[RMDB]
This 177-nucleotide RNA was probed chemically with DMS and 2A3. The data come from the RNA Mapping Database (RMDB), libraries RFM100 and RFMREP. Reactivities are given for positions 27 through 126.
RNA sequence: GGGAACGACUCGAGUAGAGUCGAAAAACAUACUGAGCUUUAGUAUUUUAGAACGGAGACACCCCCAGUUUUGUACUCAAAAAGCAUGAACAGUUCUGCUGAUGUGACAUCUGAUUUCUACGUGCGCUUAUUCUGAUUGUUUCGACAAUCAGAAUAAAAAAGAAACAACAACAACAAC
Reactivity to DMS in 0.01 (KOAc 150mM, MgCl2 10mM, bicine 150mM(pH8.5), 24C), signal-to-noise 9, nucleotides 027 to 126: a090c110a060u010a040c030u010g000a120g010c110u030u010u010a050g010u010a020u000u010u020u020a100g010a100a080c060g000g010a100g020a140c230a060c040c020c010c030c020a070g000u000u010u010u010g010u020a070c060u010c070a030a050a060a070a040g000c020a020u020g010a060a110c120a080g010u020u010c030u010g010c020u000g000a160u000g020u010g010a040c050a030u020c050u010g000a110u010u000u000c010u000a060c090g020u000g010c040g010c140
Reactivity to 2A3 in 0.01 (KOAc 150mM, MgCl2 10mM, bicine 150mM(pH8.5), 24C), signal-to-noise 9, nucleotides 027 to 126: a000c030a020u140a040c030u070g060a020g130c020u080u080u090a020g030u060a120u030u090u060u090a110g030a080a020c040g060g030a040g030a030c010a060c010c010c000c010c000a010g000u010u020u070u090g020u050a080c020u020c080a020a090a030a020a000g030c030a040u110g050a070a050c040a090g050u100u040c030u040g030c020u020g020a070u060g040u050g040a020c010a040u020c020u020g050a130u030u060u050c020u050a040c040g050u040g040c040g000c040

Source information:
Conditions: 150 mM KOAc, 10 mM MgCl2 and 150 mM bicine (pH 8.5), 24 C.